[RMDB]
RNA sequence: GGGAACGACUCGAGUAGAGUCGAAAAACUACAAUUGUACUUUGACACUGUAAACUGGUCUUUAAUAGAGUCAUGACCUGAAGACUGAUGGAGAGAAAGAAACAUCCAUGGAAGAGAGUGAGCUAAAUCACAUAGAACCAAACAAGGUCAUUGGUGAGAUAGGAUGAUCAUUCGUGAUCAUCCUAUCAAAAGAAACAACAACAACAAC
Reactivity to 2A3 in 0.01 (KOAc 150mM, MgCl2 10mM, bicine 150mM(pH8.5), 24C), signal-to-noise 8, nucleotides 027 to 156: a000c100u180a060c060a100a140u100u090g060u080a070c030u090u040u060g030a020c030a020c090u070g020u160a050a110a070c050u040g020g010u030c020u030u090u060a170a160u130a060g050a010g050u050c040a050u060g040a040c010c010u030g060a040a020g060a040c050u080g040a040u040g030g000a030g030a010g030a060a130a020g060a030a100a010c020a020u000c030c010a050u040g020g040a050a020g040a020g020a010g030u030g010a010g000c010u070a060a070a070u060c010a010c010a040u110a050g070a040a020c040c010a030a030a050c020a090a010g030g000u020c010a040u010u100g040g000u040g010a050
Reactivity to DMS in 0.01 (KOAc 150mM, MgCl2 10mM, bicine 150mM(pH8.5), 24C), signal-to-noise 4, nucleotides 027 to 156: a080c050u000a070c060a080a120u000u010g070u000a080c070u000u010u000g020a110c000a040c040u000g010u010a050a070a100c070u000g020g020u000c030u000u000u000a070a110u010a090g010a120g010u000c030a030u000g020a100c030c020u000g010a080a080g020a080c030u000g020a060u000g020g010a140g020a190g010a110a050a120g000a100a080a050c050a100u000c020c030a060u000g000g000a100a100g000a180g010a080g030u000g010a030g030c060u010a050a080a170u000c030a070c050a070u000a110g010a050a110c050c040a030a090a100c090a080a090g020g020u000c020a110u000u000g010g020u010g010a170
Source: RMDB library OK3TST, as collected in RNAgym. This 207-nucleotide RNA was probed chemically with 2A3 and DMS. For 2A3 the reverse transcriptase was SuperScript II with manganese. In probing experiments dimethyl sulfate is read out at A N1 and C N3, which are open when not base-paired. Conditions: 150 mM KOAc, 10 mM MgCl2 and 150 mM bicine (pH 8.5), 24 C.